Chemical mapping of a 177-nucleotide RNA with 2A3 and DMS.
DMS adducts were read by reverse transcription with MarathonRT.
For 2A3 the reverse transcriptase was SuperScript II with manganese.
The RNA was probed in 150 mM KOAc, 10 mM MgCl2 and 150 mM bicine (pH 8.5) at 24 C.
[RMDB]
RNA sequence: GGGAACGACUCGAGUAGAGUCGAAAACGGGAGGAGCGAGGGGACCGCAGGCGGGGGCGCAGGACCUGAGGAGCCGCGCCGGGAGGAGGGUCGGGCGGGUCUCAGCCCCUCCUCACCCCCAGGCUCCCUUGAUCUACUAGUUCGCUAGUAGAUCAAGAAAAGAAACAACAACAACAAC
Reactivity to 2A3 in 0.01 (KOAc 150mM, MgCl2 10mM, bicine 150mM(pH8.5), 24C), signal-to-noise 1, nucleotides 027 to 126: c070g020g030g000a080g020g000a020g040c060g050a160g050g000g030g020a060c090c100g030c090a030g030g070c080g080g000g000g000g000c010g000c030a090g010g060a020c010c050u080g020a100g070g070a060g080c010c030g000c050g020c000c010g030g070g010a060g000g010a020g010g050g020u100c020g010g010g040c050g040g060g020u030c020u000c030a010g000c000c000c000c000u000c000c000u000c010a030c020c000c020c020c010a010g000g200c000u030c010c000
Reactivity to DMS in 0.01 (KOAc 150mM, MgCl2 10mM, bicine 150mM(pH8.5), 24C), signal-to-noise 2, nucleotides 027 to 126: c110g010g010g030a120g020g000a040g030c050g000a300g030g000g010g010a080c090c040g020c140a040g000g030c160g000g000g020g010g010c000g010c110a130g010g020a070c040c030u000g010a080g010g010a170g020c010c010g030c110g050c000c040g000g000g020a090g000g000a050g020g000g010u000c050g000g000g000c040g000g000g020u000c030u000c010a180g000c060c000c010c000u010c000c000u010c010a060c030c000c010c030c000a210g000g000c010u010c000c040